[RMDB]
RNA sequence: GGGAACGACUCGAGUAGAGUCGAAAAACACCCUCGCCCCGAAGCAAGUAAGAUAGAGAAAAAGCGGUUCUCGGGAGCUUCAGUUGUUUCCACCGGGUAGUAGCCGAAGCGACAGCGCAAAGGGGGCCUAUCAGGUAUAGUUCGCUAUACCUGAUAGAAAAGAAACAACAACAACAAC
Reactivity to 2A3 in 0.01 (KOAc 150mM, MgCl2 10mM, bicine 150mM(pH8.5), 24C), signal-to-noise 1, nucleotides 027 to 126: a000c060a100c010c010c010u010c090g050c000c000c030c040g020a060a010g000c030a080a000g030u210a070a050g090a210u230a080g060a010g080a050a150a000a050a040g140c120g050g070u070u040c010u010c020g090g040g000a030g000c000u050u010c030a060g000u040u030g040u040u020u030c040c060a100c020c060g130g000g000u010a050g000u000a000g090c000c000g030a020a000g010c000g030a020c010a020g030c070g000c050a000a000a060g060g000g010g040g000c000
Reactivity to DMS in 0.01 (KOAc 150mM, MgCl2 10mM, bicine 150mM(pH8.5), 24C), signal-to-noise 3, nucleotides 027 to 126: a070c160a160c030c000c010u000c180g020c000c000c010c030g010a140a110g000c040a160a170g010u020a050a100g000a130u000a060g000a080g000a040a040a060a170a100g000c120g020g000u000u000c040u000c020g000g010g000a180g010c000u000u000c020a040g010u000u000g000u000u000u000c010c020a120c150c140g010g020g020u000a050g000u010a060g020c000c020g010a050a060g000c060g010a070c110a060g000c150g010c060a010a070a110g010g000g000g000g010c100